Description: The record gives the reactivity of an RNA of 177 nucleotides to 2A3 and DMS. For 2A3 the reverse transcriptase was SuperScript II with manganese. The 2A3 profile rests on 599 reads. The DMS profile rests on 4,967 reads.
[RMDB]
RNA sequence: GGGAACGACUCGAGUAGAGUCGAAAAUUACUUUUUUCGUGUUACUUCCUGGGACGGAAAAAGGAAGUUUAGGUUAUACGAUAUUAGCCGGCGCGCUAUUUGGCCUAGUUUGUUAUGCUACGUAUGAAUCCACUCACUAGUUCGCUAGUGAGUGGAUAAAAGAAACAACAACAACAAC
Reactivity to 2A3 in 0.01 (KOAc 150mM, MgCl2 10mM, bicine 150mM(pH8.5), 24C), signal-to-noise 2, nucleotides 027 to 126: u100u020a040c070u000u000u010u010u010u000c040g000u050g080u150u160a120c070u060u050c030c140u060g050g050g050a030c000g010g000a000a000a000a000a000g010g060a000a060g050u030u020u010a010g150g020u030u090a070u020a120c100g030a090u020a050u140u050a010g000c000c030g140g000c090g040c020g110c010u050a180u050u030u160g010g030c000c030u010a020g060u030u050u010g100u080u020a130u200g030c060u100a090c040g080u050a000u150g100a020
Reactivity to DMS in 0.01 (KOAc 150mM, MgCl2 10mM, bicine 150mM(pH8.5), 24C), signal-to-noise 2, nucleotides 027 to 126: u010u060a110c000u020u000u010u000u000u000c020g030u010g010u040u020a050c070u000u010c050c050u000g000g010g010a020c010g000g010a000a000a000a000a000g010g000a060a070g000u020u010u000a060g010g050u000u030a060u010a120c100g000a070u010a060u010u010a100g000c040c020g010g010c110g000c100g020c040u000a020u020u020u020g000g010c010c030u000a030g010u030u010u010g010u000u010a060u020g020c250u040a040c010g010u000a060u030g000a110